[RMDB]
RNA sequence: GGGAACGACUCGAGUAGAGUCGAAAAUAAGUCUAGUUCGCUAGACUUACUAUCGGGAAAACAGCCUCCCGGCUCGAUCAGGCGGAUUGCGUCCAAGCGCUGCAACACACGUAUUCGUACGUGUGAACGUUCCUCUUUGGUUCGCCAAAGAGGAACGAAAAGAAACAACAACAACAAC
Reactivity to DMS in 0.01 (KOAc 150mM, MgCl2 10mM, bicine 150mM(pH8.5), 24C), signal-to-noise 1, nucleotides 027 to 126: u000a000a010g010u000c000u000a000g020u000u020c220g030c000u010a010g000a010c010u000u000a010c080u010a060u020c000g000g000g000a060a090a090a180c030a060g000c040c010u000c010c000c000g000g000c040u000c030g040a100u010c080a140g020g020c060g000g010a060u000u000g020c040g030u000c020c020a100a060g000c120g010c000u000g010c110a110a190c010a020c010a010c000g000u010a010u000u010c130g010u000a010c000g040u020g000u010g000a120a110
Reactivity to 2A3 in 0.01 (KOAc 150mM, MgCl2 10mM, bicine 150mM(pH8.5), 24C), signal-to-noise 2, nucleotides 027 to 126: u040a000a030g020u000c000u010a000g020u030u030c200g100c080u000a010g010a010c000u040u000a010c000u060a050u170c040g000g000g030a010a150a080a080c040a020g010c000c000u000c020c000c000g020g000c020u010c030g020a040u080c010a040g160g000c030g120g050a170u020u260g090c020g010u030c000c030a000a010g040c040g000c090u030g000c020a130a060c000a010c000a000c010g010u000a020u030u050c240g010u030a020c000g000u000g000u010g040a000a020
An RNA of 177 nucleotides, treated with DMS and 2A3 and read out base by base. It was measured as part of the RMDB library M2PK50. For 2A3, 2,018 sequencing reads were counted. The RNA was probed in 150 mM KOAc, 10 mM MgCl2 and 150 mM bicine (pH 8.5) at 24 C.